RNA sequence: GGGAACGACUCGAGUAGAGUCGAAAACACUAACCGUAAGGGGCUGAGGGGGCCAGAACGAAGUGGUAUCUUCGUUACCUUCAGUAGGGCAAAUCACCCGCAGUAGCUUUGUCUCUGGCCAAGACACGGGUAUGAGUGAGUUCGCUCACUCAUACCCAAAAGAAACAACAACAACAAC
Reactivity to 2A3 in 0.01 (KOAc 150mM, MgCl2 10mM, bicine 150mM(pH8.5), 24C), signal-to-noise 2, nucleotides 027 to 126: c120a010c090u100a100a060c010c000g000u020a100a190g000g000g050g000c000u000g020a010g050g000g000g020g040c000c040a030g030a000a000c000g000a000a000g000u070g050g170u250a090u130c020u020u020c000g040u030u030a070c000c010u000u070c060a000g000u100a060g000g020g000c060a050a090a070u090c020a070c040c030c000g000c040a020g020u250a000g000c040u090u080u160g080u000c000u000c010u060g030g010c010c010a000a030g040a020c040a040c080